Source: RMDB library OK2TRN, as collected in RNAgym. Structure probing data (DMS) for a 177-nucleotide construct. The RNA was probed in 150 mM KOAc, 10 mM MgCl2 and 150 mM bicine (pH 8.5) at 24 C.
[RMDB]
RNA sequence: GGGAACGACUCGAGUAGAGUCGAAAAGGGUACUCAGGGAGGAGGGCUCAGGCAGGCAGCAGAGGCCUGGAGGGCCUGGCUCUGUGGGAUCUGUGACCUUCUCCACUCCAGUUGGCAAGGGUCCAGGUCAUCUGAGCACUUUCGAGUGCUCAGAUGAAAAAGAAACAACAACAACAAC
Reactivity to DMS in 0.01 (KOAc 150mM, MgCl2 10mM, bicine 150mM(pH8.5), 24C), signal-to-noise 2, nucleotides 027 to 126: g030g000g010u000a070c040u000c060a120g000g000g000a050g010g010a170g020g000g010c030u000c010a030g030g000c050a060g020g020c050a120g000c130a120g000a140g000g010c010c000u000g000g020a130g010g030g010c000c020u000g010g000c030u000c030u010g000u000g010g010g010a090u040c020u000g010u000g000a040c000c010u000u020c100u000c010c000a060c020u000c170c150a130g020u010u010g010g000c230a140a090g000g000g000u000c000c030a040g000g010